[RMDB]
RNA sequence: GGGAACGACUCGAGUAGAGUCGAAAAAUGUGGUCGAAGUCGAAGUGGGUGAGCACAAUGUGUCGAACGUCGGACGUGCGGUAGCCGAGCUGUUCGAUCUGGCGGGCCGCGGUUUCGGCCUGCAAGAAAGCUUCACGAAUUUCGAUUCGUGAAGCUUAAAAGAAACAACAACAACAAC
Reactivity to DMS in 0.01 (KOAc 150mM, MgCl2 10mM, bicine 150mM(pH8.5), 24C), signal-to-noise 2, nucleotides 027 to 126: a070u010g020u000g010g000u000c020g000a070a070g020u010c030g010a080a110g000u010g000g030g000u010g030a250g000c040a070c130a050a110u000g010u010g000u010c020g010a020a050c030g000u000c030g000g010a070c080g020u010g000c070g010g020u000a080g000c010c010g010a030g030c070u000g000u000u000c010g000a050u000c050u010g010g010c010g010g000g000c010c010g010c160g000g000u000u000u010c010g000g000c010c050u000g020c040a030a050g000a080
Reactivity to 2A3 in 0.01 (KOAc 150mM, MgCl2 10mM, bicine 150mM(pH8.5), 24C), signal-to-noise 1, nucleotides 027 to 126: a020u130g050u110g010g030u000c000g000a000a030g040u030c030g030a120a070g100u210g040g050g040u070g010a010g000c010a020c030a180a130u140g050u010g000u080c020g040a020a020c040g030u000c000g040g000a050c070g080u200g020c130g080g000u050a050g050c010c000g020a020g020c060u060g010u030u000c000g000a060u030c000u030g020g000c050g000g090g030c020c020g020c060g000g050u040u050u010c030g000g000c000c000u020g000c010a010a010g110a090